[RMDB]
The record gives the reactivity of an RNA of 170 nucleotides to 2A3 and DMS. The reactions ran in a buffer of 150 mM KOAc, 10 mM MgCl2 and 150 mM bicine (pH 8.5), at 24 C. The DMS profile rests on 26,759 reads. DMS adducts were read by reverse transcription with MarathonRT.
RNA sequence: GGGAACGACUCGAGUAGAGUCGAAAAGAGAUGUUGAGGCUUGUAUGGUUCAGGUUACCUGCGGUAGCAUGACUCUUAAUGGUCUUUGGCUUGACAACACAGUCUGGUGCCCACGACACGUAAUGUGCAACUACAGCCUUCGGGCUGUAGAAAAGAAACAACAACAACAAC
Reactivity to 2A3 in 0.01 (KOAc 150mM, MgCl2 10mM, bicine 150mM(pH8.5), 24C), signal-to-noise 5, nucleotides 027 to 129: g030a000g000a030u090g010u110u090g030a040g030g050c050u080u070g070u040a110u100g030g020u030u030c040a020g020g010u000u030a030c020c010u150g070c100g060g080u020a000g030c020a030u040g010a060c020u000c000u100u160a070a030u180g000g000u010c000u070u040u040g030g000c020u010u020g010a030c010a060a000c020a100c010a030g050u000c030u060g070g000u030g010c000c000c000a050c060g060a020c020a000c010g040u080a100a140u210g030u030g040c010a030a010
Reactivity to DMS in 0.01 (KOAc 150mM, MgCl2 10mM, bicine 150mM(pH8.5), 24C), signal-to-noise 4, nucleotides 027 to 129: g000a130g060a060u030g040u080u010g040a090g010g000c040u000u000g040u030a070u030g020g040u010u000c000a070g050g000u010u020a000c060c030u090g020c190g000g000u030a070g040c040a070u030g000a080c000u010c070u030u090a050a100u050g010g020u000c040u010u000u000g000g000c060u000u000g000a100c090a030a090c100a080c110a080g000u030c040u000g020g010u020g010c080c020c060a040c130g030a150c060a000c050g030u090a080a070u030g000u000g000c060a070a080